[RMDB]
RNA sequence: GGGAACGACUCGAGUAGAGUCGAAAAAUCAUGACGCACACGUCUUCCAUCUGUUUGCGGAAGCGUGGGUUCGGGUCCUCUGCAUGGCCUAUUCCAACUACGCUGGUUAAACGGAGGGUUGCCAUUGAACCUACAAUGCUUUCGAGCAUUGUAGGUUAAAAGAAACAACAACAACAAC
Reactivity to 2A3 in 0.01 (KOAc 150mM, MgCl2 10mM, bicine 150mM(pH8.5), 24C), signal-to-noise 3, nucleotides 027 to 126: a000u100c060a070u100g050a010c050g050c040a030c010a000c070g070u010c000u030u000c020c000a130u050c050u190g300u210u190u220g130c100g020g030a000a000g000c000g000u010g000g010g040u090u080c080g010g000g050u140c000c020u040c050u070g030c030a120u110g050g000c000c030u070a100u100u050c040c010a010a040c090u200a050c040g030c130u100g000g070u060u100a080a130a050c020g000g020a010g050g020g000u060u130g020c010c000a060u070u150g040
Reactivity to DMS in 0.01 (KOAc 150mM, MgCl2 10mM, bicine 150mM(pH8.5), 24C), signal-to-noise 4, nucleotides 027 to 126: a060u010c080a070u000g000a070c130g030c070a100c040a030c010g000u010c020u010u000c000c000a110u020c130u000g000u000u000u000g020c250g000g000a060a010g000c010g020u010g010g010g000u000u010c080g020g010g020u000c010c010u000c040u000g020c080a140u000g000g020c010c020u010a130u010u000c070c070a070a120c120u000a070c170g010c090u010g000g020u000u000a030a070a090c040g000g000a040g010g000g010u000u000g010c020c010a160u010u000g010
Chemical mapping of a 177-nucleotide RNA with 2A3 and DMS.
The reactions ran in a buffer of 150 mM KOAc, 10 mM MgCl2 and 150 mM bicine (pH 8.5), at 24 C.
As a SHAPE reagent, 2A3 marks flexible, mostly unpaired nucleotides at the ribose 2'-OH.
It was measured as part of the RMDB library OK2TST.
For DMS the reverse transcriptase was MarathonRT.
Values are in units of 0.01, from 0 to 300, in steps of 10.
For DMS, 4,742 sequencing reads were counted.
For 2A3 the reverse transcriptase was SuperScript II with manganese.